Structure probing data (2A3 and DMS) for a 177-nucleotide construct.

RNA sequence: GGGAACGACUCGAGUAGAGUCGAAAACAUGCUCAAUGCAGGCAUCACUCCGGUAGUCCGCGAAUACGGUUCACUGGGCUGCUCCGGUGACUUGGCUCCGCUGUCGCACUGCGCAUUAGUGCUGAUGACCAGGAUGAAUUUUCGAAUUCAUCCUGGUAAAAGAAACAACAACAACAAC
Reactivity to 2A3 in 0.01 (KOAc 150mM, MgCl2 10mM, bicine 150mM(pH8.5), 24C), signal-to-noise 4, nucleotides 027 to 126: c030a030u080g010c020u060c040a070a120u120g000c030a020g020g010c010a050u060c020a030c040u040c010c000g000g010u030a010g020u040c020c000g020c040g100a040a030u180a120c120g160g000u050u050c020a030c040u130g000g000g050c060u100g020c020u040c000c020g000g000u010g010a010c020u070u090g030g000c020u060c040c040g010c050u040g040u070c030g000c000a020c020u040g010c050g000c050a030u050u150a020g030u020g030c050u070g040a120u150g050
Reactivity to DMS in 0.01 (KOAc 150mM, MgCl2 10mM, bicine 150mM(pH8.5), 24C), signal-to-noise 6, nucleotides 027 to 126: c110a070u000g010c020u000c070a070a060u000g010c030a120g010g010c040a080u010c070a080c050u010c110c080g000g020u010a050g020u000c010c010g020c080g010a040a060u000a110c180g000g000u000u000c030a050c040u010g020g010g000c090u010g010c120u000c090c050g000g010u000g010a040c100u010u000g010g010c040u000c060c040g010c080u000g000u010c080g000c030a040c020u000g000c100g020c080a050u000u000a050g010u000g010c030u000g000a090u010g010
DMS adducts were read by reverse transcription with MarathonRT. For DMS, 8,187 sequencing reads were counted. The RNA was probed in 150 mM KOAc, 10 mM MgCl2 and 150 mM bicine (pH 8.5) at 24 C.